An RNA of 177 nucleotides, treated with 2A3 and DMS and read out base by base. The RNA was probed in 150 mM KOAc, 10 mM MgCl2 and 150 mM bicine (pH 8.5) at 24 C. DMS adducts were read by reverse transcription with MarathonRT. It was measured as part of the RMDB library OK2TST. For DMS, 5,045 sequencing reads were counted. The 2A3 profile rests on 1,443 reads.
[RMDB]
RNA sequence: GGGAACGACUCGAGUAGAGUCGAAAAUUGGUGUUGCAAGCAGGAUCCAAAGGAGACCUAUAGUGACUCCCAGGAGCUCUUAGUGACCAAGUGAAGGUACCUGUGGGGCUCAUUGUGCCCAUUGCUCUCAUACCCCUCUAUUCGUAGAGGGGUAUGAAAAAGAAACAACAACAACAAC
Reactivity to 2A3 in 0.01 (KOAc 150mM, MgCl2 10mM, bicine 150mM(pH8.5), 24C), signal-to-noise 2, nucleotides 027 to 126: u040u070g040g000u040g010u000u110g030c030a090a060g030c000a020g080g020a100u030c010c050a140a060a090g040g000a060g060a170c010c030u090a080u100a230g050u100g000a030c020u040c040c000c010a020g130g000a030g000c010u010c020u070u030a030g050u030g050a020c010c000a030a080g080u090g200a160a070g030g000u070a060c000c030u040g060u120g010g000g010g050c000u010c050a040u020u160g020u070g050c000c000c000a010u050u140g000c030u040c020
Reactivity to DMS in 0.01 (KOAc 150mM, MgCl2 10mM, bicine 150mM(pH8.5), 24C), signal-to-noise 5, nucleotides 027 to 126: u000u010g010g010u010g010u010u010g020c050a080a110g020c110a050g010g000a290u000c020c030a060a120a170g010g000a070g020a110c030c020u000a130u000a160g000u000g010a070c030u010c050c000c070a170g000g000a050g010c020u000c020u000u000a070g010u000g020a050c020c010a070a130g010u010g020a130a060g020g000u000a030c070c020u000g010u000g010g000g010g010c020u000c040a060u010u000g020u000g000c000c010c000a100u010u000g010c100u010c090